This 177-nucleotide RNA was probed chemically with DMS and 2A3. The 2A3 profile rests on 1,243 reads. The RNA was probed in 150 mM KOAc, 10 mM MgCl2 and 150 mM bicine (pH 8.5) at 24 C. It was measured as part of the RMDB library OK1LIB.
RNA sequence: GGGAACGACUCGAGUAGAGUCGAAAACAAACAACAACAACAACAACCAUUAUCAUUAGCCCCUAUAUAUCUAUAUGUCCCCACCCCCUAAUGAUAAUGCCCAUAUAGAUAUACAACAACAACAAAAGGGUAAUAGAUAGUUCGCUAUCUAUUACCCAAAAGAAACAACAACAACAAC
Reactivity to DMS in 0.01 (KOAc 150mM, MgCl2 10mM, bicine 150mM(pH8.5), 24C), signal-to-noise 2, nucleotides 027 to 126: c130a130a060a100c250a110a080c260a000a060c090a100a090c220a220a100c160a130a040c250c020a000u020u010a060u010c040a030u010u000a060g000c020c000c010c040u050a030u000a030u000a020u010c040u030a070u000a010u030g000u000c020c050c020c050a100c050c010c020c010c010u000a010a030u010g010a040u020a070a020u000g000c030c010c000a080u000a140u020a040g000a090u010a000u010a050c190a050a020c050a020a060c230a090a120c100a010a040a110a150
Reactivity to 2A3 in 0.01 (KOAc 150mM, MgCl2 10mM, bicine 150mM(pH8.5), 24C), signal-to-noise 2, nucleotides 027 to 126: c020a040a150a040c040a040a000c010a030a010c000a020a000c010a040a000c000a050a000c050c000a050u030u030a050u060c050a050u020u050a020g010c000c000c010c050u010a010u000a010u000a010u130c060u010a040u010a080u180g070u070c000c010c000c000a000c000c000c000c000c040u020a050a000u040g040a010u020a010a010u050g040c010c020c010a030u130a000u020a050g040a010u120a000u070a060c000a090a030c000a020a000c040a050a000c010a010a160a010a050